[RMDB]
RNA sequence: GGGAACGACUCGAGUAGAGUCGAAAACCGAGGCUUCUCAAACUCCUUCGGCAAGAUUCUCCUGGAACACCUAUUAAUACUGCACAUUGGGACACUGUGAAAACGCUGGUUUGGCUUGUCCCCAGCACGUCGUAGUAAAUUUCGAUUUACUACGACGAAAAGAAACAACAACAACAAC
Reactivity to DMS in 0.01 (KOAc 150mM, MgCl2 10mM, bicine 150mM(pH8.5), 24C), signal-to-noise 5, nucleotides 027 to 126: c020c000g000a100g010g020c100u000u010c020u010c060a070a130a170c080u000c050c010u000u000c080g010g020c050a080a100g000a110u000u000c030u000c030c020u000g000g010a050a070c080a080c030c050u000a120u000u000a070a100u010a070c100u000g010c030a040c060a100u010u000g000g000g000a060c050a040c110u000g010u000g000a080a060a060a090c160g000c060u000g010g010u000u000u010g010g010c020u000u000g010u000c000c020c000c120a050g010c080a170
Reactivity to 2A3 in 0.01 (KOAc 150mM, MgCl2 10mM, bicine 150mM(pH8.5), 24C), signal-to-noise 5, nucleotides 027 to 126: c020c010g010a030g010g000c050u060u030c030u080c070a120a090a050c030u030c020c000u050u090c060g020g000c040a040a020g010a090u050u020c030u020c000c010u040g020g020a040a030c030a040c020c020u040a050u160u100a130a100u090a140c050u050g050c030a040c020a090u040u100g030g020g040a020c030a010c080u060g030u030g110a060a070a020a020c060g020c050u060g100g000u050u120u100g040g010c010u040u090g050u100c000c020c000c010a000g030c010a000
The data come from the RNA Mapping Database (RMDB), library OK2TST. Chemical mapping of a 177-nucleotide RNA with DMS and 2A3. The DMS profile rests on 6,756 reads. Reactivities are given for positions 27 through 126.